Chemical mapping of a 177-nucleotide RNA with DMS and 2A3.
For DMS the reverse transcriptase was MarathonRT.
The RNA was probed in 150 mM KOAc, 10 mM MgCl2 and 150 mM bicine (pH 8.5) at 24 C.
For 2A3, 6,863 sequencing reads were counted.
Values cover nucleotides 27 to 126.
RNA sequence: GGGAACGACUCGAGUAGAGUCGAAAACCCUCACUCUUCGGAGUGAGGGAAAUCUGAUUCCCAAUAGCUGGGUAUCCGGGCUAACACGGAUAGGCGUUGCCAAAAGAUCUGGCUUCGGCCAGAUCAAGUUAUUAAAUGAGUUCGCUCAUUUAAUAACAAAAGAAACAACAACAACAAC
Reactivity to DMS in 0.01 (KOAc 150mM, MgCl2 10mM, bicine 150mM(pH8.5), 24C), signal-to-noise 7, nucleotides 027 to 126: c000c000c000u000c000a010c000u000c000u000u020c190g020g000a020g010u000g010a010g000g000g010a000a010a030u000c150u010g000a250u000u000c000c000c000a120a120u010a050g010c030u000g010g010g020u010a020u000c010c010g000g000g010c080u000a080a070c080a100c020g000g000a010u000a030g010g010c050g010u000u000g010c020c030a080a080a110a140g000a010u000c000u000g000g010c000u000u010c180g020g010c000c000a010g000a000u000c000a020a070
Reactivity to 2A3 in 0.01 (KOAc 150mM, MgCl2 10mM, bicine 150mM(pH8.5), 24C), signal-to-noise 4, nucleotides 027 to 126: c000c000c000u000c010a010c000u010c000u020u090c250g140g000a000g000u000g000a010g010g010g000a050a040a010u080c060u090g070a200u020u030c020c000c000a010a110u150a040g020c020u040g090g130g040u040a010u010c000c010g000g030g030c070u130a200a010c110a020c090g010g000a010u020a020g040g010c090g210u170u260g040c010c010a040a060a030a070g000a000u010c000u010g000g000c000u010u030c190g100g000c000c000a000g000a000u000c000a010a000